[RMDB]
RNA sequence: GGGAACGACUCGAGUAGAGUCGAAAAGAUAUGGAAGUUAUGGAGCUCUGUCGCUGUGCCAGCGGAAGCUCGGAAACGAGCUUCCGCGGUAAUACAGCGAAGAGCGAUGAAAUAACUUCCUAAGUCAGGAUACAUACUACUUCGGUAGUAUGUAUCCAAAAGAAACAACAACAACAAC
Reactivity to DMS in 0.01 (KOAc 150mM, MgCl2 10mM, bicine 150mM(pH8.5), 24C), signal-to-noise 1, nucleotides 027 to 126: g000a040u000a300u000g010g000a000a000g020u000u000a010u000g010g000a060g000c010u000c000u020g010u000c020g020c010u000g080u000g030c010c020a120g100c000g000g020a000a010g070c010u020c010g000g000a070a160a180c000g010a020g000c010u000u010c020c020g050c020g010g030u000a050a120u000a220c000a000g060c030g020a080a020g040a000g040c000g020a040u010g000a050a060a020u000a000a020c000u000u000c000c010u000a000a060g030u000c050a080